Chemical mapping of a 177-nucleotide RNA with 2A3 and DMS. For DMS, 38,060 sequencing reads were counted. Values cover nucleotides 27 to 126. The reactions ran in a buffer of 150 mM KOAc, 10 mM MgCl2 and 150 mM bicine (pH 8.5), at 24 C.
RNA sequence: GGGAACGACUCGAGUAGAGUCGAAAAAAGGUGCCAUCAUAUCGGUUAAGAACUCAUAACUCUGAUGGCUUUCGAGUUAUGUGGUGCAUUGAAGCUCUCCCUUCAAAUGGUCGUACAGUUCCGUGAAAUUGAAACGUAAUUUCGAUUACGUUUCAAUAAAAGAAACAACAACAACAAC
Reactivity to 2A3 in 0.01 (KOAc 150mM, MgCl2 10mM, bicine 150mM(pH8.5), 24C), signal-to-noise 7, nucleotides 027 to 126: a000a000g070g010u030g020c030c010a020u020c020a010u050a030u160c040g060g020u100u080a110a030g060a090a030c010u010c050a020u010a020a010c000u000c080u140g040a040u060g120g080c000u010u040u020c010g000a000g000u020u010a010u030g060u090g030g030u040g030c040a040u020u120g050a040a020g010c010u000c010u030c040c010c000u000u010c010a040a060a080u050g020g000u020c020g020u030a040c020a110g010u040u030c020c020g060u080g060a170a210
Reactivity to DMS in 0.01 (KOAc 150mM, MgCl2 10mM, bicine 150mM(pH8.5), 24C), signal-to-noise 9, nucleotides 027 to 126: a060a050g010g010u010g010c020c020a030u000c030a070u010a080u000c100g010g000u000u010a090a090g000a100a080c050u000c020a020u000a010a010c010u000c020u010g020a030u010g010g010c150u000u000u000c050g000a040g000u000u000a010u000g010u010g010g010u000g010c070a110u000u000g010a060a070g000c080u000c050u000c050c050c010u000u000c060a030a070a080u000g010g010u000c090g010u000a060c080a090g010u000u000c020c010g010u010g000a050a090